[RMDB]
RNA sequence: GGGAACGACUCGAGUAGAGUCGAAAAUUCACCCUCUUACCGCUUCUCCACACUCCUUCCCCCCUGCGGGCUCCCCCCAUAAGAUGACGAGGACCCCACUCAUCGGGGUCCGCAGUCUCAUCCUUUCCCCCCUUCUAGUUCGCUAGAAGGAAAAGAAACAACAACAACAAC
Reactivity to DMS in 0.01 (KOAc 150mM, MgCl2 10mM, bicine 150mM(pH8.5), 24C), signal-to-noise 9, nucleotides 027 to 129: u040u020c100a070c000c000c000u000c040u010u010a080c060c080g050c010u030u010c020u020c020c020a110c100a100c030u010c020c020u020u030c030c020c000c040c010c000u000g060c040g010g000g020c040u000c020c000c030c060c020c030a060u070a040a060g020a050u050g020a010c010g020a250g030g010a020c010c000c010c010a080c230u040c200a110u070c180g000g010g020g020u010c010c000g020c090a150g010u030c070u020c040a080u010c040c050u020u010u010c000c010c010c090
Reactivity to 2A3 in 0.01 (KOAc 150mM, MgCl2 10mM, bicine 150mM(pH8.5), 24C), signal-to-noise 4, nucleotides 027 to 129: u080u040c050a100c000c010c000u020c020u030u050a050c020c010g000c030u030u020c020u020c000c000a040c010a040c050u020c020c000u010u020c000c000c020c010c000c010u010g010c040g010g020g000c020u020c000c020c000c010c000c000a020u050a030a060g030a010u100g000a010c020g000a040g020g000a000c010c010c010c000a030c080u180c030a150u200c120g000g000g000g010u000c010c000g000c000a010g010u000c010u000c030a030u040c020c000u000u020u020c010c000c000c010
The record gives the reactivity of an RNA of 170 nucleotides to DMS and 2A3. The RNA was probed in 150 mM KOAc, 10 mM MgCl2 and 150 mM bicine (pH 8.5) at 24 C. The DMS profile rests on 46,230 reads.